This 177-nucleotide RNA was probed chemically with DMS and 2A3.

RNA sequence: GGGAACGACUCGAGUAGAGUCGAAAAAGGAUUGUGCCCAAGGUCACAGAGUAACUGGUGGAGCUAGGAUUCAAGUCCAGGUCUGUUAUACUCUGAAACCAGUCCUCCUGACUACUGCCUUGGGUUCCUGACUGAUCCCAUUCGUGGGAUCAGUCAGAAAAGAAACAACAACAACAAC
Reactivity to DMS in 0.01 (KOAc 150mM, MgCl2 10mM, bicine 150mM(pH8.5), 24C), signal-to-noise 2, nucleotides 027 to 126: a080g000g000a120u050u010g010u010g030c040c000c000a020a000g010g010u060c250a300c060a000g000a000g000u000a060a030c200u000g000g000u020g000g000a070g000c020u030a080g030g000a030u000u030c300a140a120g010u000c020c010a080g000g000u000c000u000g000u040u000a090u000a020c000u000c030u020g000a070a070a060c150c040a000g040u000c020c220u010c070c060u010g010a050c020u010a070c020u010g020c000c000u000u000g000g000g010u010u020c020
Reactivity to 2A3 in 0.01 (KOAc 150mM, MgCl2 10mM, bicine 150mM(pH8.5), 24C), signal-to-noise 3, nucleotides 027 to 126: a010g200g030a260u160u220g040u140g030c030c000c000a000a000g000g010u080c030a000c000a040g000a000g020u010a070a060c110u070g000g010u030g000g020a010g010c020u070a210g060g000a080u240u150c200a200a050g060u000c000c010a020g000g240u000c030u030g030u030u000a040u020a070c010u000c010u030g000a040a000a000c000c000a000g000u010c000c010u070c000c000u030g040a040c020u090a010c010u080g000c000c000u010u010g000g000g000u000u030c010
Source information:
The 2A3 profile rests on 1,783 reads.